[RMDB]
RNA sequence: GGGAACGACUCGAGUAGAGUCGAAAAUCCCACAGGUUCGCCUGUGGGACAGUCUCCUAAGUCGCAUGAGGGACAUGUCGAAUAUCGGAAACGAUAUACGACAACAGCCUCCCCACCAUGCGAUAUGGAUAGUUAUACAAGGGUUCGCCCUUGUAAAUCAAAGCAUCCAAUUCGUUGGAUGCUUUGAAAAAGAAACAACAACAACAAC
Reactivity to DMS in 0.01 (KOAc 150mM, MgCl2 10mM, bicine 150mM(pH8.5), 24C), signal-to-noise 1, nucleotides 027 to 156: u000c010c000c000a000c000a000g030g010u000u000c300g050c010c000u040g070u000g000g000g090a010c010a030g020u010c030u000c000c000u000a090a300g030u010c000g020c000a070u000g020a120g000g040g000a010c040a300u000g000u010c000g050a300a020u000a010u000c000g020g000a270a150a240c020g000a040u000a010u000a130c000g020a030c000a010a040c050a210g010c090c040u000c000c000c000c010a210c240c010a020u020g010c000g000a060u000a100u000g020g000a110u010a100g010u000u000a260u000a010c000a000a000g020g020g020u000u010c230g050c000c000c000u010u000g000u000a010a100a190
Reactivity to 2A3 in 0.01 (KOAc 150mM, MgCl2 10mM, bicine 150mM(pH8.5), 24C), signal-to-noise 1, nucleotides 027 to 156: u000c020c030c000a020c000a010g030g060u090u150c180g090c040c030u000g000u000g000g000g010a000c000a010g120u050c080u030c090c020u100a160a060g030u020c000g000c010a030u000g010a070g010g000g000a020c040a050u030g010u010c000g000a060a010u010a000u000c020g030g040a090a060a100c010g000a000u000a000u010a080c000g020a000c000a000a080c040a020g040c030c040u000c040c030c010c030a120c000c000a000u000g000c010g010a000u010a030u040g000g010a020u060a100g120u250u140a150u030a090c000a000a000g090g000g050u030u120c200g210c010c000c000u010u010g000u030a010a010a000